[RMDB]
RNA sequence: GGGAACGACUCGAGUAGAGUCGAAAACGGUGACCGGAACGGCGAUGGCCAGCGCGCACGGGGCGGCGGCGACUAAUACCACGAGCGCGCGUUCGAUCCAGACCAGCGGAUUACCCAAGACGCUGCCAUCAAUAGUACGGUUCGCCGUACUAUUGAUAAAAGAAACAACAACAACAAC
Reactivity to 2A3 in 0.01 (KOAc 150mM, MgCl2 10mM, bicine 150mM(pH8.5), 24C), signal-to-noise 6, nucleotides 027 to 126: c040g020g060u070g030a060c030c010g010g030a070a030c050g020g000c060g090a120u110g080g000c030c010a010g000c020g000c000g010c010a020c020g010g000g010g010c000g000g020c010g010g020c010g010a030c030u100a060a120u080a220c020c030a060c080g020a030g020c020g000c000g000c000g030u060u050c040g030a040u040c010c020a010g100a160c020c010a010g040c020g040g000a030u050u110a100c000c010c010a010a000g020a010c010g000c020u010g030c020c010
Reactivity to DMS in 0.01 (KOAc 150mM, MgCl2 10mM, bicine 150mM(pH8.5), 24C), signal-to-noise 9, nucleotides 027 to 126: c070g010g010u000g010a070c030c020g000g010a100a110c100g010g020c080g010a090u010g000g010c040c060a150g010c020g010c030g020c050a100c080g000g000g000g020c120g010g010c060g000g000c040g010a120c080u010a080a110u010a140c050c050a070c050g000a070g020c020g010c030g010c020g020u010u000c060g000a060u000c030c030a090g000a090c140c050a050g000c040g000g000a110u000u010a130c020c010c020a090a100g000a110c020g000c010u000g000c100c050